[RMDB]
RNA sequence: GGGAACGACUCGAGUAGAGUCGAAAAGAGUUCAACCUGUCCGGCCUGCUGCGCGGCGACCAGAAGAGCCGCUACGAGUCGUACGCCAUUGGCCGUCAAUGGGGCUGGCUGAGCGUCAAUGACAUUCCGUGAUCACUCUUUUCGAAGAGUGAUCACGAAAAGAAACAACAACAACAAC
Reactivity to DMS in 0.01 (KOAc 150mM, MgCl2 10mM, bicine 150mM(pH8.5), 24C), signal-to-noise 2, nucleotides 027 to 126: g000a160g040u000u000c100a080a060c050c010u000g010u000c030c020g000g040c010c010u000g020c080u000g010c120g010c080g000g000c020g000a070c060c070a240g010a170a120g000a160g040c000c030g010c010u000a120c030g000a150g000u020c000g000u000a010c100g030c000c030a090u000u010g010g040c040c070g000u010c100a020a140u010g000g020g000g010c030u010g020g000c020u000g010a020g010c030g030u000c040a060a040u000g010a050c150a110u000u000c050
Reactivity to 2A3 in 0.01 (KOAc 150mM, MgCl2 10mM, bicine 150mM(pH8.5), 24C), signal-to-noise 2, nucleotides 027 to 126: g010a000g020u090u100c040a080a040c040c010u040g060u100c020c050g000g000c000c020u040g070c000u020g020c010g010c010g070g000c000g040a080c020c070a030g050a210a020g060a170g040c020c010g040c040u000a010c030g040a000g010u030c020g000u020a080c060g070c000c010a080u050u090g020g000c070c020g090u100c020a080a040u160g050g030g060g000c020u020g000g030c050u030g030a000g040c020g160u070c040a040a120u100g040a030c010a080u090u020c060
This 177-nucleotide RNA was probed chemically with DMS and 2A3. The reactions ran in a buffer of 150 mM KOAc, 10 mM MgCl2 and 150 mM bicine (pH 8.5), at 24 C. DMS (dimethyl sulfate) methylates the pairing face of unpaired adenines and cytosines. The DMS profile rests on 1,619 reads. Values cover nucleotides 27 to 126. For 2A3 the reverse transcriptase was SuperScript II with manganese. It was measured as part of the RMDB library OK2TST. Reactivities are rounded to 0.1 and cut off at 0 and 3.